[RMDB]
RNA sequence: GGGAACGACUCGAGUAGAGUCGAAAACUGAAUUGUCUGAUCGUUACAUCACUGAUCGUUUUUUACCAGAUAAAGCGAUUGAUUUAGUUGACCAAGCAUGUGCAACAAUUCGUACGGAAAUGGGAUCCAAACAAGACAAGUUCGCUUGUCUUGUUUGAAAAGAAACAACAACAACAAC
Reactivity to DMS in 0.01 (KOAc 150mM, MgCl2 10mM, bicine 150mM(pH8.5), 24C), signal-to-noise 8, nucleotides 027 to 126: c030u020g000a030a030u010u010g010u020c090u000g000a040u010c040g000u020u010a080c140a080u000c060a080c130u020g000a020u010c020g020u000u000u010u030u030u020a090c180c180a100g000a110u000a020a040a030g010c010g010a030u000u000g000a070u010u010u020a030g000u010u010g000a090c040c040a060a070g000c120a080u010g020u010g000c070a080a050c090a030a060u010u000c030g010u010a080c090g010g000a040a080a060u000g000g010g000a100u020c090
Reactivity to 2A3 in 0.01 (KOAc 150mM, MgCl2 10mM, bicine 150mM(pH8.5), 24C), signal-to-noise 9, nucleotides 027 to 126: c040u050g020a010a020u060u050g050u050c090u080g050a120u100c060g050u090u080a040c020a050u040c030a010c050u060g010a020u020c010g010u000u010u000u010u040u120a170c060c060a070g020a160u150a070a020a000g000c010g010a010u020u040g020a030u080u120u110a080g050u070u130g080a100c050c020a060a020g070c070a130u140g040u130g070c030a030a020c000a020a060u050u050c040g060u090a080c070g070g060a020a070a120u110g030g030g030a000u020c030